[RMDB]
RNA sequence: GGGAACGACUCGAGUAGAGUCGAAAACGACGCAGGUUCGCCUGCGUCGCACUACCGAGAAUGCGACACGGUAUAUUAAAACGCGCCUUGGAAACAAGGCAAAUAAGGCCAGAUUCGUCUGGCCUAAUGAGGACAUAGGGUUCGCCCUAUGUCCUCAAAAAGAAACAACAACAACAAC
Reactivity to 2A3 in 0.01 (KOAc 150mM, MgCl2 10mM, bicine 150mM(pH8.5), 24C), signal-to-noise 1, nucleotides 027 to 126: c030g000a000c020g000c000a000g000g050u060u110c190g110c020c000u000g020c000g000u000c000g010c010a050c010u030a020c000c010g000a020g040a040a120u170g050c040g060a030c000a020c060g000g050u060a090u030a060u260u300a110a100a010a000c040g060c000g000c070c000u020u010g020g020a000a040a040c000a000a000g010g010c000a000a000a000u020a020a020g000g000c010c010a010g010a050u000u050c140g050u020c020u000g000g000c000c000u000a000a000
Reactivity to DMS in 0.01 (KOAc 150mM, MgCl2 10mM, bicine 150mM(pH8.5), 24C), signal-to-noise 1, nucleotides 027 to 126: c020g000a020c010g020c010a010g010g030u020u020c260g020c000c000u000g000c000g000u000c000g010c050a030c070u000a090c040c010g000a190g010a070a150u000g030c020g010a090c090a080c040g010g040u020a010u000a030u020u060a050a030a080a090c140g010c160g010c020c000u000u010g010g000a070a030a170c000a010a000g000g000c000a030a000a070u010a070a030g010g000c000c000a000g000a030u010u030c190g010u000c000u000g000g000c000c000u000a000a060